The record gives the reactivity of an RNA of 207 nucleotides to 2A3. For 2A3 the reverse transcriptase was SuperScript II with manganese. The reactions ran in a buffer of 150 mM KOAc, 10 mM MgCl2 and 150 mM bicine (pH 8.5), at 24 C.

RNA sequence: GGGAACGACUCGAGUAGAGUCGAAAACUAUCACGCCGAUGGCGUGAUAGUUGGCUUUUGGCGCGAUCCAUCCAGCGGUGGUGCCAUACCGUUUGACUUCACUAAGUUUGAUAAGACUAAAUGUCCUAUUCAAGCCGUGAUAGUCGUUCCUCGUGCUGAGACACGGAGUGUUCGCACUCCGUGUCUCAAAAGAAACAACAACAACAAC
Reactivity to 2A3 in 0.01 (KOAc 150mM, MgCl2 10mM, bicine 150mM(pH8.5), 24C), signal-to-noise 1, nucleotides 027 to 156: c010u000a000u000c000a000c010g000c000c030g300a290u300g020g000c020g000u000g000a000u010a000g010u000u020g000g000c010u130u040u120u100g100g000c050g000c040g110a010u090c130c080a070u050c040c040a020g000c080g000g000u070g040g000u080g040c000c000a000u000a000c000c000g030u030u080u170g010a010c000u010u000c010a010c000u090a060a000g010u020u020u020g010a000u020a010a000g000a000c030u110a080a200a280u300g000u020c000c000u030a050u100u110c010a000a070g000c000c000g000u010g030a010u000a010g000u000c000g000u000u000c010c010u050c020g040u040g050c030u040